[RMDB]
RNA sequence: GGGAACGACUCGAGUAGAGUCGAAAAAAACAACGUUAAAUUCGCUCCUGCUUACGCUAAAGCUGCGUAAGUCCAGUUGAGCCCUGCGAAACUUCAAUGCUAUCUAGAAGCUUUAGCGGGUAAUUUUUGAUAGCUUAGAUUAAAGAAUUGACGAAUCGCCAUUGACUUAGUUCGCUAAGUCAAUGGCAAAAGAAACAACAACAACAAC
Reactivity to 2A3 in 0.01 (KOAc 150mM, MgCl2 10mM, bicine 150mM(pH8.5), 24C), signal-to-noise 2, nucleotides 027 to 156: a000a020a030c060a050a010c040g010u100u090a110a090a100u100u100c020g000c000u000c000c000u000g000c000u010u000a000c000g000c030u120a160a110a240g130c080u030g000c070g000u000a000a000g010u020c010c060a030g000u080u090g040a000g000c000c010c020u040g000c040g010a090a110a140c010u030u030c040a090a000u070g010c000u000a020u000c000u030a060g000a030a000g060c010u070u110u140a040g040c060g000g000g000u040a080a140u040u120u050u040u160g010a010u010a000g020c000u030u060a070g020a100u130u080a080a080a020g060a050a020u080u040g010a010c010g020a060a100u110c100